[RMDB]
RNA sequence: GGGAACGACUCGAGUAGAGUCGAAAAUGAACGUGCGUACAUCUCUCUCAGACUGUACGACAGUCUGACUCUCUCGCACUCAAGUUCCACGAGAGAGAGAGAGCGUUGGAACUAGGGUGAAAUGAAAGAUGAUUACAGGAUUCGUCCUGUAAUCAUCAAAAGAAACAACAACAACAAC
Reactivity to DMS in 0.01 (KOAc 150mM, MgCl2 10mM, bicine 150mM(pH8.5), 24C), signal-to-noise 7, nucleotides 027 to 126: u010g010a060a090c140g030u000g010c030g010u000a050c070a110u000c020u000c010u000c040u000c030a120g000a040c110u000g010u000a080c190g010a120c010a040g010u000c010u010g010a090c070u000c020u000c010u000c010g000c050a040c020u010c070a060a050g000u000u000c010c010a060c110g010a070g000a070g000a050g000a040g010a030g000a060g010c080g000u000u000g000g000a020a020c020u000a070g010g000g010u000g000a070a070a060u010g010a110a120a110
Reactivity to 2A3 in 0.01 (KOAc 150mM, MgCl2 10mM, bicine 150mM(pH8.5), 24C), signal-to-noise 5, nucleotides 027 to 126: u160g030a090a030c090g040u110g050c020g000u100a040c030a120u010c030u010c000u000c000u000c020a010g020a120c060u020g010u130a100c070g110a080c050a000g020u000c020u030g030a030c000u010c000u010c010u020c050g020c020a010c020u050c040a050a020g020u020u000c010c010a000c000g040a050g000a020g010a000g000a000g010a000g010a070g030c030g060u100u100g030g000a020a010c010u010a070g070g030g020u100g070a080a110a110u210g040a160a070a040
Structure probing data (DMS and 2A3) for a 177-nucleotide construct.
The DMS profile rests on 11,088 reads.
It was measured as part of the RMDB library M2PK90.
Conditions: 150 mM KOAc, 10 mM MgCl2 and 150 mM bicine (pH 8.5), 24 C.
2A3 adducts were read by reverse transcription with SuperScript II with manganese.
For DMS the reverse transcriptase was MarathonRT.